[RMDB]
RNA sequence: GGGAACGACUCGAGUAGAGUCGAAAAUUAACACGUCAUACUGAAUCACUUGAGUAUUACACUCGAGUUACGUCUGACGCGUUGUCUCAGAUGAUCAAAGUGGACGGAAUUUCUUGCCAUGUCGCCAACUAGUGGCUGGAUUCGUCCAGCCACUAGUAAAAGAAACAACAACAACAAC
Reactivity to DMS in 0.01 (KOAc 150mM, MgCl2 10mM, bicine 150mM(pH8.5), 24C), signal-to-noise 2, nucleotides 027 to 126: u010u010a050a070c030a060c010g000u000c010a020u000a030c040u000g000a110a140u010c220a020c010u000u000g010a000g000u000a090u000u030a200c300a020c000u000c020g000a000g020u000u010a080c250g010u000c030u000g000a020c030g040c030g030u000u000g010u020c050u000c000a050g010a060u010g000a090u010c130a050a070a080g010u000g000g000a020c050g000g030a080a040u010u000u000c020u000u010g030c000c020a060u000g000u000c020g020c060c070a060
Reactivity to 2A3 in 0.01 (KOAc 150mM, MgCl2 10mM, bicine 150mM(pH8.5), 24C), signal-to-noise 2, nucleotides 027 to 126: u070u050a000a000c020a000c040g000u030c010a020u030a040c010u030g090a160a050u130c040a010c010u000u000g000a000g030u020a100u150u300a080c070a000c060u000c000g010a000g010u020u040a020c030g000u000c000u020g010a020c000g000c010g090u050u070g090u000c010u000c030a050g060a230u180g050a080u040c090a150a080a030g060u020g050g000a020c040g000g050a040a060u060u030u060c040u050u130g030c010c020a030u110g040u060c040g000c090c020a010
An RNA of 177 nucleotides, treated with DMS and 2A3 and read out base by base. For 2A3 the reverse transcriptase was SuperScript II with manganese.